[RMDB]
RNA sequence: GGGAACGACUCGAGUAGAGUCGAAAAACGACUAUUAUGUACAAUCAAGUGGUUGGAAACAGGGAGAACCUAAGUCUCAUUAGAUAUGGUUAAGAUAUAGUCUGAACUUUGUAGGAGACUACAAGAAGGUUAGGAGUAACGAACCUAAUCGUAACAACUACCGAAAAUCAUUCGUGAUUUUCGGUAGAAAAGAAACAACAACAACAAC
Reactivity to 2A3 in 0.01 (KOAc 150mM, MgCl2 10mM, bicine 150mM(pH8.5), 24C), signal-to-noise 4, nucleotides 027 to 156: a000c030g010a010c020u020a030u180u040a090u150g060u070a060c030a100a030u040c050a140a130g040u080g170g030u070u060g040g030a110a100a060c060a070g080g010g020a090g040a050a010c000c000u010a080a050g010u000c020u010c030a110u120u240a030g030a040u060a040u090g020g030u030u070a030a070g020a060u040a010u010a080g010u020c030u020g060a060a070c020u020u070u130g010u040a010g000g040a010g030a040c000u030a010c010a010a010g130a090a030g020g010u000u000a000g000g010a020g040u040a030a030c030g020a010a000c010c010u000a000a010u000c000g000u030a000a040c060a060a030
Reactivity to DMS in 0.01 (KOAc 150mM, MgCl2 10mM, bicine 150mM(pH8.5), 24C), signal-to-noise 2, nucleotides 027 to 156: a100c070g030a070c010u000a050u000u000a050u010g010u010a100c060a130a090u000c040a150a170g040u010g000g020u030u000g040g010a120a070a090c060a110g020g050g010a090g020a070a090c020c020u000a010a120g020u000c000u000c020a090u000u000a090g000a110u000a110u000g020g010u030u000a060a080g000a060u000a060u010a070g000u000c020u020g010a070a060c010u000u010u020g020u000a040g010g010a130g000a120c010u000a060c110a040a050g000a180a070g000g010u000u010a000g010g000a060g010u000a050a070c300g000a120a100c000c000u000a010a010u000c030g010u000a050a130c040a070a190

Chemical mapping of a 207-nucleotide RNA with 2A3 and DMS. The 2A3 profile rests on 2,568 reads. The DMS profile rests on 3,369 reads. Reactivities are given for positions 27 through 156.